[RMDB]
RNA sequence: GGGAACGACUCGAGUAGAGUCGAAAAGGUGGCGCAUACCUGUAAUCCCAGCUACUCAGAAGGCUGAGGCACGAGAAUCACUUGAGCCUGGGAGGCAUAGGUUGCAAUGAGUCAAGAUCGCGCCACUGCACUCCAGCCUGGGAGACAGAGCAAGACACCGUAAAAUGAGUUUCGACUCAUUUUACGGAAAAGAAACAACAACAACAAC
Reactivity to DMS in 0.01 (KOAc 150mM, MgCl2 10mM, bicine 150mM(pH8.5), 24C), signal-to-noise 1, nucleotides 027 to 156: g020g020u000g050g010c030g060c050a140u000a030c010c000u000g000u000a160a080u000c000c000c000a090g010c010u000a000c050u000c030a100g010a100a060g050g010c080u000g010a040g000g040c060a150c110g010a110g030a110a150u030c030a060c040u000u000g000a050g000c040c000u010g020g010g010a040g000g000c080a110u000a010g010g030u000u000g010c010a100a040u000g010a140g040u010c040a080a180g010a110u000c050g000c000g020c010c000a070c040u010g000c010a090c050u020c020c030a080g010c010c010u000g020g010g010a110g000a060c030a100g000a060g000c030a080a060g000a180c000a200
Reactivity to 2A3 in 0.01 (KOAc 150mM, MgCl2 10mM, bicine 150mM(pH8.5), 24C), signal-to-noise 2, nucleotides 027 to 156: g000g020u020g000g000c070g000c010a000u040a090c010c040u010g060u090a060a030u000c010c010c010a000g060c050u160a010c050u060c080a100g040a210a070g230g020c040u030g020a120g090g030c040a060c120g120a110g070a130a080u090c020a050c080u030u040g040a010g000c000c000u010g010g040g010a010g040g000c020a020u060a040g070g000u030u110g040c050a050a170u160g060a050g120u160c020a100a010g040a220u110c090g020c000g000c040c000a010c000u000g000c020a020c060u050c000c000a030g010c000c010u000g000g050g000a060g000a040c010a050g040a000g000c040a010a000g060a080c080a010